RNA sequence: GGGAACGACUCGAGUAGAGUCGAAAAGCGUACUACCUCCUCGGAUAGCGACGACGAUCUCCGUAUCUGAGCUCCCAAAUAGGAGCUCAGCCGAGCGGAGGGAGUCGUGCGGAGAGAGGUAUCGCAAAAGAAAGCGUAACUUCGGUUACGCUUUCAACAGUUCAAGGUUGUUCGCAACCUUGAACUGAAAAGAAACAACAACAACAAC
Reactivity to 2A3 in 0.01 (KOAc 150mM, MgCl2 10mM, bicine 150mM(pH8.5), 24C), signal-to-noise 2, nucleotides 027 to 156: g000c010g050u050a050c010u000a000c000c000u010c020c010u000c020g120g130a250u220a190g040c080g190a080c010g000a020c000g030a050u070c000u010c000c000g000u010a120u030c000u000g000a000g030c000u060c000c020c010a100a300a080u300a080g000g000a000g000c000u000c000a000g000c010c100g040a030g030c010g000g000a010g000g010g000a020g000u020c000g000u000g000c010g030g020a020g010a010g000a000g000g000u000a010u140c000g000c010a020a040a000a040g010a000a000a000g000c010g010u000a000a000c000u030u080c250g010g000u010u000a000c000g000c000u000u000u000c000a000a000
Reactivity to DMS in 0.01 (KOAc 150mM, MgCl2 10mM, bicine 150mM(pH8.5), 24C), signal-to-noise 1, nucleotides 027 to 156: g010c000g020u000a110c020u000a020c030c000u000c000c000u040c000g000g070a290u000a100g030c020g030a040c020g020a060c020g100a300u000c000u000c000c010g040u000a140u000c000u000g000a030g140c000u000c000c000c010a110a140a300u000a070g010g000a000g000c000u000c000a000g010c050c010g020a300g080c040g030g000a010g000g020g010a300g000u000c010g020u000g000c050g050g000a080g020a120g000a060g040g010u000a000u000c040g000c010a070a090a090a090g020a010a000a000g010c010g020u000a000a010c020u020u000c300g090g070u000u020a010c000g030c000u000u000u000c000a150a210